The record gives the reactivity of an RNA of 207 nucleotides to 2A3 and DMS. DMS (dimethyl sulfate) methylates the pairing face of unpaired adenines and cytosines. For DMS, 4,323 sequencing reads were counted. Source: RMDB library RNAMAK, as collected in RNAgym. The reactions ran in a buffer of 150 mM KOAc, 10 mM MgCl2 and 150 mM bicine (pH 8.5), at 24 C.

RNA sequence: GGGAACGACUCGAGUAGAGUCGAAAAUCCUAAGUCUCGUACUUUGAUCGAGCGUUGUCAGCUCGUGUCGGAAACGACACAGAGCUUGGAUUUACGCUCGGGAGUACGAGAUAUGGAAAAACGUCGCAAGUUCUAGUUCGCUAGAACUUGCGACGAACAAUUAAAAGGAGUUCGCUCCUUUUAAUUGAAAAGAAACAACAACAACAAC
Reactivity to 2A3 in 0.01 (KOAc 150mM, MgCl2 10mM, bicine 150mM(pH8.5), 24C), signal-to-noise 2, nucleotides 027 to 156: u010c010c000u040a100a050g040u010c000u000c000g000u010a010c010u070u080u160g150a220u300c020g000a000g000c000g000u000u020g000u000c000a000g000c020u000c010g000u010g000u010c000g030g030a170a070a070c020g010a010c010a010c060a100g020a000g000c010u010u060g030g010a000u070u010u300a000c000g000c000u010c010g000g010g000a000g000u000a000c000g010a000g000a000u010a010u010g020g030a050a090a040a000a000c000g010u000c010g000c000a010a010g000u020u000c000u000a020g010u050u090c220g020c160u010a000g000a000a000c000u000u000g010c030g000a010c010g000a000a000
Reactivity to DMS in 0.01 (KOAc 150mM, MgCl2 10mM, bicine 150mM(pH8.5), 24C), signal-to-noise 1, nucleotides 027 to 156: u010c000c010u000a060a200g010u000c010u010c010g020u000a020c000u000u010u000g020a140u000c010g000a000g000c020g020u000u000g000u000c010a080g010c000u000c000g040u000g020u000c010g000g020a200a160a300c020g010a010c000a020c000a150g010a000g000c000u020u000g040g000a040u000u020u000a010c000g040c000u010c000g030g010g010a010g000u000a000c010g010a030g010a000u000a050u000g010g000a080a100a060a090a070c020g030u000c000g020c000a000a040g010u000u000c000u000a010g010u000u010c300g040c000u000a010g000a010a030c000u010u000g010c000g000a000c010g000a050a070